Chemical mapping of a 207-nucleotide RNA with 2A3 and DMS.
For DMS the reverse transcriptase was MarathonRT.
The data come from the RNA Mapping Database (RMDB), library PDB130.

[RMDB]
RNA sequence: GGGAACGACUCGAGUAGAGUCGAAAACUCCGAGAGCAGACUUACAGAUCCCGAGUGCUGGCUCAUACUCAGAUCCCACAAAGGAUGUUGCUUACUACGGAUAGCAGGUCGGUGGCCAUGAAGGUUGGAACCCGCUGAGGAAUGUGUAACAACUCACCGAUUACUUAGGGUUCGCCCUAAGUAAUCGAAAAGAAACAACAACAACAAC
Reactivity to 2A3 in 0.01 (KOAc 150mM, MgCl2 10mM, bicine 150mM(pH8.5), 24C), signal-to-noise 3, nucleotides 027 to 156: c020u000c020c040g080a060g000a010g130c070a020g040a190c050u190u200a070c120a080g060a230u060c000c010c010g020a010g000u050g060c080u090g050g000c010u010c020a070u060a020c030u040c040a010g000a100u010c000c050c000a040c030a050a040a010g120g000a060u160g010u060u030g020c030u020u020a020c030u040a010c020g040g010a040u050a040g010c010a010g000g050u090c030g020g050u120g030g030c000c000a020u130g080a140a040g090g000u050u020g020g020a030a040c000c000c000g010c030u040g000a040g060g050a160a050u040g010u000g010u060a030a030c020a010a030c030u020c060a040c020
Reactivity to DMS in 0.01 (KOAc 150mM, MgCl2 10mM, bicine 150mM(pH8.5), 24C), signal-to-noise 1, nucleotides 027 to 156: c020u000c050c030g000a150g020a060g000c040a120g010a180c080u020u000a160c050a160g000a120u000c000c030c020g010a110g000u000g040c050u020g010g020c030u000c030a040u000a060c040u020c010a100g010a110u000c000c000c010a110c190a070a110a190g030g010a150u000g020u000u010g010c000u000u010a090c030u000a140c090g000g000a100u000a070g020c080a000g010g030u000c030g050g000u010g020g030c020c010a070u000g010a150a100g050g000u000u010g010g000a060a050c010c010c050g010c000u000g000a070g010g010a080a120u020g010u010g000u000a080a070c060a060a150c020u000c040a210c100